[RMDB]
RNA sequence: GGGAACGACUCGAGUAGAGUCGAAAACUUGUGGUUCGUUUAGAGACUGCUUGCUUAUAACACUUGGCCAGAACGAAAAUCUAUCUAAUAUCCGUAGCGUCAUAAUGUGUAGUAUAGCCGACAUUUGAACACUACUGAGCUUCGGCUCAGUAGUGUUAAAAGAAACAACAACAACAAC
Reactivity to 2A3 in 0.01 (KOAc 150mM, MgCl2 10mM, bicine 150mM(pH8.5), 24C), signal-to-noise 2, nucleotides 027 to 126: c000u060u030g030u030g020g000u060u020c110g060u000u000u150a140g000a030g020a010c000u000g030c000u070u130g020c090u020u110a060u150a290a000c010a020c060u030u060g000g000c000c000a040g080a120a000c030g180a020a020a020a020u040c070u080a010u040c070u070a150a080u090a100u070c010c000g060u000a000g010c000g100u020c010a010u080a230a030u100g060u000g010u100a060g000u020a070u130a210g000c000c000g030a070c040a090u050u010u180g030
Reactivity to DMS in 0.01 (KOAc 150mM, MgCl2 10mM, bicine 150mM(pH8.5), 24C), signal-to-noise 2, nucleotides 027 to 126: c170u000u010g020u020g020g000u000u030c090g000u000u040u030a070g000a140g000a080c050u000g020c010u000u000g000c000u020u030a050u000a100a090c110a050c040u020u000g000g000c000c060a140g040a180a060c090g010a100a080a030a110u050c170u030a050u030c140u050a030a070u040a050u000c090c000g010u010a100g000c150g040u000c030a040u030a050a020u020g000u010g000u020a130g000u000a060u010a060g030c000c010g010a030c110a050u000u020u000g000